[RMDB]
RNA sequence: GGGAACGACUCGAGUAGAGUCGAAAACAGUGACUCUGACACUGACAGACUCAGACUGUGAGUGACUCACUGAGUGUGAGUGUGUCUCACACACACAGAGUGACAGAGUGACUCAGUGACAGUGUGACGGCUUGCUAUCGUUCGCGAUAGCAAGCCGAAAAGAAACAACAACAACAAC
Reactivity to 2A3 in 0.01 (KOAc 150mM, MgCl2 10mM, bicine 150mM(pH8.5), 24C), signal-to-noise 2, nucleotides 027 to 126: c000a040g060u010g110a040c000u020c010u060g000a000c000a000c030u010g000a020c000a020g060a050c020u030c050a040g100a170c040u010g050u020g070a030g030u030g050a040c000u040c030a020c040u080g150a030g190u140g010u000g040a030g000u150g040u080g100u000c000u020c010a040c000a020c010a000c010a000c040a020g100a010g060u000g050a050c080a070g040a000g020u060g030a010c020u040c030a020g010u030g040a020c030a060g050u050g030u020g100a010
Reactivity to DMS in 0.01 (KOAc 150mM, MgCl2 10mM, bicine 150mM(pH8.5), 24C), signal-to-noise 2, nucleotides 027 to 126: c050a070g030u000g010a060c090u000c000u010g000a300c050a020c050u000g070a130c150a070g000a100c070u000c030a110g000a150c110u000g010u010g000a060g000u000g000a030c080u000c000a020c030u010g020a190g080u020g000u000g000a050g020u010g030u010g040u050c050u040c070a080c070a070c050a190c020a080c120a040g030a060g010u000g040a150c080a090g030a070g030u000g000a160c300u000c050a080g000u030g000a100c070a030g000u000g000u000g000a120
An RNA of 177 nucleotides, treated with 2A3 and DMS and read out base by base. For 2A3 the reverse transcriptase was SuperScript II with manganese. The data come from the RNA Mapping Database (RMDB), library OK2TRN. The reactions ran in a buffer of 150 mM KOAc, 10 mM MgCl2 and 150 mM bicine (pH 8.5), at 24 C. 2A3 is a SHAPE reagent: it acylates the 2'-hydroxyl of flexible nucleotides of all four kinds.